[RMDB]
RNA sequence: GGGAACGACUCGAGUAGAGUCGAAAAGAUAUGGAUACGAAGAACGACAUGUCAGCUUCGGAAACGAAGUAGUGACAACAGCGGGAGUAUCCUAAGUCAAAUCUUCAAGUCUUCGGACUUGAAGAAAGGUAUGAGCUAUGUUCGCAUAGCUCAUACCAAAAGAAACAACAACAACAAC
Reactivity to 2A3 in 0.01 (KOAc 150mM, MgCl2 10mM, bicine 150mM(pH8.5), 24C), signal-to-noise 3, nucleotides 027 to 126: g020a000u040a020u120g000g000a000u010a000c030g110a140a130g150a300a020c050g120a040c070a190u170g020u000c010a010g010c020u000u010c000g020g010a040a000a000c000g010a000a010g010u120a130g300u000g040a030c040a110a070c110a100g070c020g000g030g000a090g010u010a000u000c000c000u000a040a000g020u040c030a070a040a170u000c000u000u000c010a000a000g010u000c000u050u220c300g120g000a010c010u000u000g000a000a000g000a000a000a010
Reactivity to DMS in 0.01 (KOAc 150mM, MgCl2 10mM, bicine 150mM(pH8.5), 24C), signal-to-noise 3, nucleotides 027 to 126: g010a030u000a240u000g000g010a000u000a000c000g000a210a230g000a140a150c010g010a050c110a110u000g000u000c000a040g000c000u010u000c000g000g000a040a040a100c000g000a000a000g020u000a030g030u000g000a030c000a070a140c260a160g000c020g000g000g030a290g010u000a000u000c010c000u000a030a130g010u010c010a090a080a140u000c000u000u000c000a000a000g000u000c000u010u020c210g010g000a010c000u000u000g000a000a000g010a000a050a040